RNA sequence: GGGAACGACUCGAGUAGAGUCGAAAAAGCCCGUAGCUCCGGUGGCGGUAUCAACAUUUAAUCAGGAGGUUAUCGUGGAAGACUGCAUUGAAUGGACCGGAGGUGUCAACUCUAAGGGUUAUGGUCGUAAGUGGGUUAAUGGUAAACUUGUGACUCCAUGCAAUCAUGUUUUCGAACAUGAUUGCAUAAAAGAAACAACAACAACAAC
Reactivity to DMS in 0.01 (KOAc 150mM, MgCl2 10mM, bicine 150mM(pH8.5), 24C), signal-to-noise 2, nucleotides 027 to 156: a160g030c030c000c000g020u010a150g010c010u000c020c000g030g040u010g010g040c040g030g030u000a090u000c020a080a120c040a060u000u050u000a070a040u000c040a100g000g010a100g030g020u000u000a010u000c050g030u000g000g030a170a120g000a030c020u010g000c060a110u000u000g030a040a090u010g010g000a090c010c070g020g010a040g020g060u020g000u000c040a040a110c050u000c050u000a110a090g000g030g000u000u000a090u010g010g040u010c060g010u000a030a070g020u000g010g000g010u000u000a040a120u000g000g010u000a060a100a100c070u000u000g020u000g000a180c020u000c020c180
Reactivity to 2A3 in 0.01 (KOAc 150mM, MgCl2 10mM, bicine 150mM(pH8.5), 24C), signal-to-noise 3, nucleotides 027 to 156: a010g100c030c000c000g010u050a010g040c020u000c040c030g060g000u020g020g040c070g000g040u090a060u190c020a020a050c010a020u020u040u170a090a050u050c060a060g070g060a040g050g130u080u080a110u130c130g050u080g030g030a070a070g010a090c040u010g010c040a040u030u080g060a050a040u050g050g060a000c040c010g020g010a020g000g010u050g010u050c030a050a040c010u020c020u150a060a080g050g000g000u070u050a050u120g040g020u040c030g030u030a060a020g000u020g050g040g000u060u110a060a060u130g050g030u080a060a070a040c020u060u020g010u000g040a030c000u020c050c030
The record gives the reactivity of an RNA of 207 nucleotides to DMS and 2A3. Conditions: 150 mM KOAc, 10 mM MgCl2 and 150 mM bicine (pH 8.5), 24 C. The 2A3 profile rests on 1,509 reads.